An RNA of 177 nucleotides, treated with 2A3 and DMS and read out base by base. The reactions ran in a buffer of 150 mM KOAc, 10 mM MgCl2 and 150 mM bicine (pH 8.5), at 24 C. Reactivities are given for positions 27 through 126. Values are in units of 0.01, from 0 to 300, in steps of 10. For DMS the reverse transcriptase was MarathonRT. For 2A3 the reverse transcriptase was SuperScript II with manganese. Source: RMDB library M2PK90, as collected in RNAgym.

RNA sequence: GGGAACGACUCGAGUAGAGUCGAAAAUCUAUCACCAGCCCAUGUUUACGACACGAAUGCGCUGUUGCAAAUUACGUAUAGCUCUUGCAACAUCGUGUCGAAACGUUCCCAAGCUAUACGCCACAAAUACAUAAAUCUGCUUCGGCAGAUUUAUGUAAAAAGAAACAACAACAACAAC
Reactivity to 2A3 in 0.01 (KOAc 150mM, MgCl2 10mM, bicine 150mM(pH8.5), 24C), signal-to-noise 2, nucleotides 027 to 126: u020c010u020a090u090c020a030c120c000a030g040c010c020c010a020u070g050u100u080u050a020c010g010a020c000a000c000g060a100a050u300g120c150g020c140u020g000u000u000g000c000a020a060a090u160u070a060c020g020u010a000u010a020g020c010u000c010u160u020g000c000a010a010c000a020u010c010g010u020g000u010c010g000a000a050a000c030g020u010u020c000c000c000a000a020g010c000u000a000u010a030c000g010c030c000a060c010a020a140a010
Reactivity to DMS in 0.01 (KOAc 150mM, MgCl2 10mM, bicine 150mM(pH8.5), 24C), signal-to-noise 2, nucleotides 027 to 126: u010c100u000a090u000c060a060c050c040a060g000c000c020c010a120u010g020u000u000u000a110c030g010a010c010a010c020g010a040a110u010g000c220g030c220u000g010u000u000g010c000a010a040a170u010u030a060c060g000u000a010u000a000g010c000u000c230u000u000g010c000a010a050c030a040u010c000g000u000g020u010c020g010a010a050a130c040g000u000u000c010c000c000a120a040g000c000u000a010u000a000c000g030c160c140a080c140a070a020a130